[RMDB]
RNA sequence: GGGAACGACUCGAGUAGAGUCGAAAAGCAAGUCGCAUCGCAAAACCGCGGCAAGUGGAGUUAGCGAGAGGAGGCUGGGUUUUGGCUUCCUUUAGCAAUCGGUCACCGAGAAGGUGUGGUCGUUACCUAGACAGUUUUCUGUUCGCAGAAAACUGAAGGUAUAGCAUAGAUUCGUCUAUGCUAUACCAAAAGAAACAACAACAACAAC
Reactivity to 2A3 in 0.01 (KOAc 150mM, MgCl2 10mM, bicine 150mM(pH8.5), 24C), signal-to-noise 9, nucleotides 027 to 156: g030c030a040a050g020u050c010g020c030a050u060c050g050c160a090a080a050a050c060c050g000c010g030g010c080a090a040g020u040g040g060a110g050u100u150a030g030c000g010a030g000a010g040g010a010g020g000c020u070g060g150g080u080u100u180u300g020g000c000u010u000c000c000u000u010u010a010g000c000a010a050u060c020g030g010u040c010a010c020c030g030a060g070a190a060g070g010u070g010u030g040g010u000c010g020u020u030a160c000c000u030a060g030a100c000a000g000u000u000u000u000c000u010g040u040u090c220g010c060a000g000a000a000a000a000c000u010g010a030a030
Reactivity to DMS in 0.01 (KOAc 150mM, MgCl2 10mM, bicine 150mM(pH8.5), 24C), signal-to-noise 4, nucleotides 027 to 156: g040c030a020a140g000u000c040g020c030a190u000c050g070c080a090a080a130a210c050c070g000c040g030g010c030a100a130g010u000g000g010a150g010u000u000a160g020c000g000a100g020a060g030g000a040g020g020c020u010g020g030g010u000u000u010u020g020g020c030u000u000c020c010u000u010u000a180g010c030a080a070u000c020g010g020u000c030a180c020c020g020a160g000a120a130g010g010u000g030u010g020g020u000c010g000u000u000a070c050c000u000a160g010a210c010a020g030u000u000u000u000c020u000g000u000u010c300g000c010a020g000a010a010a000a010c000u000g010a000a070